[RMDB]
RNA sequence: GGGAACGACUCGAGUAGAGUCGAAAAGCUGCUUGAGGCGGCCAGUGAUGGUUUCGUCCAGAUGGAUGAUCGCCGCUGAUCUCCGCUUGUCGGGGGUGAGUACAGAAUCCGGCUUAUAUGCUGGCUCGUAGACCCCGACUUUCGAGUCGGGGUCUACAAAAGAAACAACAACAACAAC
Reactivity to 2A3 in 0.01 (KOAc 150mM, MgCl2 10mM, bicine 150mM(pH8.5), 24C), signal-to-noise 1, nucleotides 027 to 126: g010c000u010g000c150u040u180g060a080g080g020c060g020g000c030c000a010g000u100g150a080u130g060g000u090u130u300c030g060u070c000c000a130g030a260u280g040g000a000u010g000a000u000c000g000c050c000g050c050u010g000a000u000c000u000c000c000g000c030u030u220g120u230c010g000g010g000g140g070u010g080a080g060u030a010c170a050g030a020a050u000c000c000g030g000c040u110u200a040u000a030u300g000c000u000g010g010c000u080c170
The data come from the RNA Mapping Database (RMDB), library RFM100. Structure probing data (2A3) for a 177-nucleotide construct. The RNA was probed in 150 mM KOAc, 10 mM MgCl2 and 150 mM bicine (pH 8.5) at 24 C.